[RMDB]
RNA sequence: GGGAACGACUCGAGUAGAGUCGAAAAUCGCUUUUGGCUUCUAUGACGAAAUCGAACAAACCGCUCGUUCGCCACAAAACAUCAGGCCCUGUUUUGUGCACUGCUUCCGGCCGCUCGGCGUCAAAACCGGAUGGAGUGCGUUCGCGCACUCCAUCCGAAAAGAAACAACAACAACAAC
Reactivity to 2A3 in 0.01 (KOAc 150mM, MgCl2 10mM, bicine 150mM(pH8.5), 24C), signal-to-noise 2, nucleotides 027 to 126: u070c020g080c070u080u090u000u000g000g000c000u140u020c050u100a120u100g100a040c050g130a040a070a060u130c090g030a080a020c050a000a080a020c050c070g030c080u070c000g050u070u000c000g000c000c010a060c050a020a070a030a000c030a030u090c020a030g010g000c000c000c000u040g050u000u060u060u030g040u050g030c040a030c120u060g000c000u060u000c020c000g060g020c040c000g070c020u000c010g030g010c040g030u040c040a000a000a020a050c050